Chemical mapping of a 177-nucleotide RNA with 2A3 and DMS. For DMS, 173,975 sequencing reads were counted. The data come from the RNA Mapping Database (RMDB), library OK1LIB. 2A3 adducts were read by reverse transcription with SuperScript II with manganese. The reactions ran in a buffer of 150 mM KOAc, 10 mM MgCl2 and 150 mM bicine (pH 8.5), at 24 C.
RNA sequence: GGGAACGACUCGAGUAGAGUCGAAAACAUGCUGGCGUCUGGUGCUAGGCGUACAGCACCAGGGUCAGCACAGCGUGCUGAGGCGACGCAAGCGGCGCUGUCACGCCCGGCGUAUGGGUUAUACGACCCAGCAGGCGAUCUUCGGGUUGCCUGUUGGAAAAGAAACAACAACAACAAC
Reactivity to 2A3 in 0.01 (KOAc 150mM, MgCl2 10mM, bicine 150mM(pH8.5), 24C), signal-to-noise 9, nucleotides 027 to 126: c040a020u070g000c010u000g000g010c010g240u140c020u000g010g010u010g000c010u030a100g150g040c090g110u160a080c060a030g000c000a000c000c000a000g010g000g010u010c000a000g000c000a000c000a000g000c010g030u060g020c040u110g060a080g070g030c050g020a040c030g030c090a080a030g060c040g060g000c010g000c030u040g070u090c010a010c060g030c000c010c000g040g000c010g000u030a040u070g050g000g010u110u050a060u010a060c040g060a090c000
Reactivity to DMS in 0.01 (KOAc 150mM, MgCl2 10mM, bicine 150mM(pH8.5), 24C), signal-to-noise 9, nucleotides 027 to 126: c110a150u010g000c000u000g000g000c000g010u050c000u000g000g010u000g010c010u000a110g010g010c150g010u020a060c090a030g000c000a010c010c010a010g000g010g010u000c000a010g010c000a010c090a040g010c020g020u000g010c150u010g010a160g010g000c040g000a060c040g010c100a140a100g010c030g000g010c010g010c010u000g000u010c070a060c070g010c010c020c020g000g000c040g010u000a030u010g000g000g000u010u020a080u020a070c060g000a080c090